[RMDB]
RNA sequence: GGGAACGACUCGAGUAGAGUCGAAAAGAAGAGCGUACCGAGCUGCGUUUCAACCUGCGUGGGUUGGGGCGGCUUAGCAGAUUAAGGAGUUGUUCCACCCUAGUGGUACUUACCCCACACAAAGCCUCUAAUUACACUGGUUCGCCAGUGUAAUUAGAAAAGAAACAACAACAACAAC
Reactivity to 2A3 in 0.01 (KOAc 150mM, MgCl2 10mM, bicine 150mM(pH8.5), 24C), signal-to-noise 2, nucleotides 027 to 126: g060a060a000g050a010g030c060g030u030a050c040c090g020a020g020c030u050g000c030g050u030u050u100c000a020a020c020c000u170g140c230g160u300g030g030g000u010u060g000g000g000g000c000g010g000c000u020u010a000g000c000a020g010a140u140u150a200a060g110g000a040g020u010u020g010u020u040c000c020a020c030c010c000u040a040g030u020g050g010u010a000c000u030u090a100c040c020c000c000a010c000a020c010a030a090a070g080c010c030u020
Reactivity to DMS in 0.01 (KOAc 150mM, MgCl2 10mM, bicine 150mM(pH8.5), 24C), signal-to-noise 2, nucleotides 027 to 126: g010a100a040g010a080g020c060g000u000a060c090c040g040a070g000c010u000g020c020g020u010u000u000c000a020a030c030c010u020g030c300g030u010g010g030g000u000u000g000g020g010g000c000g010g000c030u000u010a010g010c080a140g020a080u000u040a150a120g020g010a040g010u000u000g000u000u000c010c010a050c030c030c020u010a060g000u000g010g000u000a080c030u000u010a140c190c000c000c030a040c090a090c270a080a110a070g000c200c080u000